RNA sequence: GGGAACGACUCGAGUAGAGUCGAAAAAGGUGAAGAUUGAGCCUCAAUGUAGACGCUUUGAACCUGAAUACACACUCGGGGCGAAUUGAUCAUCGUUAACUCUCCUGCAAAGGCGCGUUCUCCGCCACAGUCGUAUAGCGUUCGCGCUAUACGACUGAAAAGAAACAACAACAACAAC
Reactivity to DMS in 0.01 (KOAc 150mM, MgCl2 10mM, bicine 150mM(pH8.5), 24C), signal-to-noise 2, nucleotides 027 to 126: a080g000g040u030g010a080a200g010a070u000u000g010a230g010c000c020u000c020a120a180u000g020u010a100g000a140c300g020c140u020u000u000g020a080a180c130c060u000g010a100a080u010a110c120a020c120a100c070u000c050g000g010g020g020c010g010a040a020u010u010g000a080u000c070a030u000c010g020u000u010a200a150c070u000c080u000c030c010u010g000c190a040a080a150g000g010c010g000c030g000u000u000c040u000c040c020g030c080c050a140
Reactivity to 2A3 in 0.01 (KOAc 150mM, MgCl2 10mM, bicine 150mM(pH8.5), 24C), signal-to-noise 2, nucleotides 027 to 126: a000g040g000u020g030a030a020g030a140u010u110g000a030g060c000c030u020c000a020a090u100g010u020a040g020a060c030g020c080u210u060u180g030a060a070c010c040u060g010a050a040u080a000c050a010c020a020c090u100c170g010g000g000g020c030g000a040a000u070u030g120a070u060c000a010u010c050g040u010u040a040a040c030u070c030u000c070c000u040g000c080a070a080a080g000g000c010g000c000g030u010u000c060u020c030c000g040c010c000a050